[RMDB]
RNA sequence: GGGAACGACUCGAGUAGAGUCGAAAAAAGAUAUGGAAGCUAGGGAGCUCCGAAAGGUCGAAGAACAAGCUCGGAAACGAGCUUGGGAGACCUAGUAGCUGAGCGAAGAACUAGCUUCCUAAGUCAACCUAAAUGAAAUCUUCGGAUUUCAUUUAGGAAAAGAAACAACAACAACAAC
Reactivity to DMS in 0.01 (KOAc 150mM, MgCl2 10mM, bicine 150mM(pH8.5), 24C), signal-to-noise 4, nucleotides 027 to 126: a070a120g010a070u000a300u000g000g010a020a010g010c000u000a010g000g000g000a120g020c000u010c010c010g010a130a210a190g010g000u010c000g000a150a160g030a190a190c010a000a000g010c000u000c020g000g000a080a120a200c000g030a020g000c010u000u000g000g020g010a080g010a020c010c010u000a050g020u010a170g010c270u000g010a000g040c000g030a120a120g010a100a210c000u000a010g000c000u000u010c000c000u000a010a080g020u000c030a140a200
Reactivity to 2A3 in 0.01 (KOAc 150mM, MgCl2 10mM, bicine 150mM(pH8.5), 24C), signal-to-noise 2, nucleotides 027 to 126: a000a040g070a040u080a070u120g020g000a020a020g010c000u010a000g000g000g040a030g050c000u000c040c020g030a050a020a010g040g010u050c020g160a300a050g000a060a020c000a000a000g000c010u010c000g040g030a000a090a080c030g020a000g000c000u000u000g000g000g000a010g000a000c000c000u000a020g020u030a000g000c300u230g000a020g000c050g260a300a050g010a030a030c000u000a000g000c000u000u010c000c000u000a060a010g020u000c000a020a080